[RMDB]
RNA sequence: GGGAACGACUCGAGUAGAGUCGAAAAUACAAUGGGUUAUUCCUAUCAAACUUUUACUGGAAGUUAAUCGAUCACAUUUUCCUAUCGGUUCUCGCCUCACAUCAUUAUGGGGCCGUAGAGGAGACUCCUGAGUUACGCUAUUCGUAGCGUAACUCAGAAAAGAAACAACAACAACAAC
Reactivity to 2A3 in 0.01 (KOAc 150mM, MgCl2 10mM, bicine 150mM(pH8.5), 24C), signal-to-noise 4, nucleotides 027 to 126: u170a030c100a030a110u120g030g020g010u060u060a110u120u070c000c000u050a090u100c140a010a090a150c040u080u120u120u160a150c090u240g090g040a030a010g030u110u080a080a000u020c040g040a060u080c080a070c070a220u050u040u080u070c000c010u000a030u090c050g050g020u040u070c080u040c040g020c010c000u050c000a030c010a130u210c020a060u080u300a070u230g000g000g000g020c020c020g020u060a020g000a020g020g020a020g030a050c010u050c010
This 177-nucleotide RNA was probed chemically with 2A3. The RNA was probed in 150 mM KOAc, 10 mM MgCl2 and 150 mM bicine (pH 8.5) at 24 C. 2A3 is a SHAPE reagent: it acylates the 2'-hydroxyl of flexible nucleotides of all four kinds. For 2A3 the reverse transcriptase was SuperScript II with manganese.